Structure probing data (DMS and 2A3) for a 207-nucleotide construct. Source: RMDB library OK3TST, as collected in RNAgym. The DMS profile rests on 2,254 reads. Conditions: 150 mM KOAc, 10 mM MgCl2 and 150 mM bicine (pH 8.5), 24 C.
[RMDB]
RNA sequence: GGGAACGACUCGAGUAGAGUCGAAAAUGGAUCUGCAACAACACCAUAUAUCCGCAGAUCCUAAGGAUGUAUGGCCAACUGAUCCGAGAGGAUCUACAUUAAGGCGAAGGUCAAAUCUACGUUAAUACCGACCUGAAGCCGAAGGUAUUAACGAACACACUCGUACCCUAUUCGUAGGGUACGAGUGAAAAGAAACAACAACAACAAC
Reactivity to DMS in 0.01 (KOAc 150mM, MgCl2 10mM, bicine 150mM(pH8.5), 24C), signal-to-noise 2, nucleotides 027 to 156: u000g020g020a030u000c000u020g040c030a200a130c150a060a070c150a080c000c040a140u020a230u000a030u000c010c010g010c080a120g000a040u000c000c050u000a060a050g000g020a040u000g000u000a020u000g020g000c030c070a070a220c060u010g010a030u000c000c000g000a300g030a250g070g010a030u000c000u000a040c050a110u000u020a030a020g020g010c080g020a120a040g000g000u010c010a070a110a090u000c020u020a070c000g010u010u000a040a020u010a010c000c000g020a300c030c020u000g040a170a170g010c070c030g000a070a280g010g020u000a040u000u000a010a020c040g040a020a080c080a150
Reactivity to 2A3 in 0.01 (KOAc 150mM, MgCl2 10mM, bicine 150mM(pH8.5), 24C), signal-to-noise 5, nucleotides 027 to 156: u130g000g010a010u020c000u040g030c060a070a070c040a090a080c020a140c050c040a050u080a040u030a040u160c050c060g000c010a010g000a010u030c000c000u030a090a030g040g000a020u030g040u120a040u090g070g000c030c030a070a020c110u070g010a010u000c000c000g000a010g000a010g070g000a010u010c020u040a050c070a170u130u150a130a060g080g010c070g030a050a020g000g010u010c000a030a010a090u100c140u170a070c020g010u000u000a000a000u000a010c000c010g000a020c010c040u060g050a080a000g020c020c010g000a010a010g010g000u000a000u000u010a010a010c010g010a050a020c090a000